[RMDB]
RNA sequence: GGGAACGACUCGAGUAGAGUCGAAAAUAGAGUCAUGUAUUUAAGAACUGAUAAAUCAUGGGCUUACCUACACAAGUCUAGACACAUGAGCAAUGAACAAAUAGCAAGGUCUGUGAUAUCUCAUAUGGCAAUACUAGGACUGAGAUUAUUUUUGUUACACUACUACGACUUUCGAGUCGUAGUAGUGAAAAGAAACAACAACAACAAC
Reactivity to 2A3 in 0.01 (KOAc 150mM, MgCl2 10mM, bicine 150mM(pH8.5), 24C), signal-to-noise 4, nucleotides 027 to 156: u130a010g050a000g020u030c010a020u040g110u140a150u110u090u060a090a070g050a140a080c050u090g050a070u060a080a060a040u060c020a020u040g040g040g000c010u010u070a070c000c010u100a030c050a010c020a130a050g020u030c030u010a010g030a050c020a000c010a090u070g020a010g110c060a070a110u080g020a070a000c020a090a070a050u090a050g060c080a030a030g090g020u060c050u010g070u040g060a070u060a090u150c040u000c030a030u050a050u130g030g000c010a080a020u040a140c030u050a030g040g140a020c020u040g050a010g010a120u050u050a090u080u300u010u030u020g010u020u020a000
Reactivity to DMS in 0.01 (KOAc 150mM, MgCl2 10mM, bicine 150mM(pH8.5), 24C), signal-to-noise 2, nucleotides 027 to 156: u040a080g000a140g010u000c010a040u000g020u010a080u000u010u000a050a150g010a140a180c120u000g010a110u000a070a070a120u000c030a020u000g000g050g040c040u000u000a110c110c030u000a070c100a190c040a050a060g050u000c050u000a050g000a120c020a060c020a050u000g000a080g060c060a100a070u010g040a090a130c030a040a060a090u010a120g020c050a060a190g010g040u000c000u000g000u040g000a120u000a020u000c020u000c000a070u000a100u000g020g020c070a030a030u000a140c040u000a070g010g000a110c060u000g010a120g000a130u010u000a090u000u010u000u000u020g020u000u010a220
Chemical mapping of a 207-nucleotide RNA with 2A3 and DMS. The DMS profile rests on 2,296 reads. For 2A3 the reverse transcriptase was SuperScript II with manganese. The reactions ran in a buffer of 150 mM KOAc, 10 mM MgCl2 and 150 mM bicine (pH 8.5), at 24 C.